[RMDB]
RNA sequence: GGGAACGACUCGAGUAGAGUCGAAAAUUUCGGUUAUGCCGAUCGUAUUCAGGAAAUUCAUAUCAAAGUCAUUCACAUCUUGAUUCAGUUGAUCGAAAAAGAGAUGGUAAAAGCCUGAUGUGCUGGAAAUAUGGAGCACUUUCGAGUGCUCCAUAUUAAAAGAAACAACAACAACAAC
Reactivity to DMS in 0.01 (KOAc 150mM, MgCl2 10mM, bicine 150mM(pH8.5), 24C), signal-to-noise 2, nucleotides 027 to 126: u010u010u000c000g020g000u000u030a100u020g010c000c030g020a020u000c190g020u000a120u000u000c040a020g000g010a050a110a180u020u000c050a060u000a040u010c080a070a080a100g010u010c120a110u010u000c180a110c000a000u000c010u020u000g000a300u000u000c040a050g020u010u010g010a080u010c080g000a030a010a030a090a190g000a000g010a010u000g000g010u020a020a070a130a130g010c050c060u000g080a040u000g030u000g000c040u000g010g030a160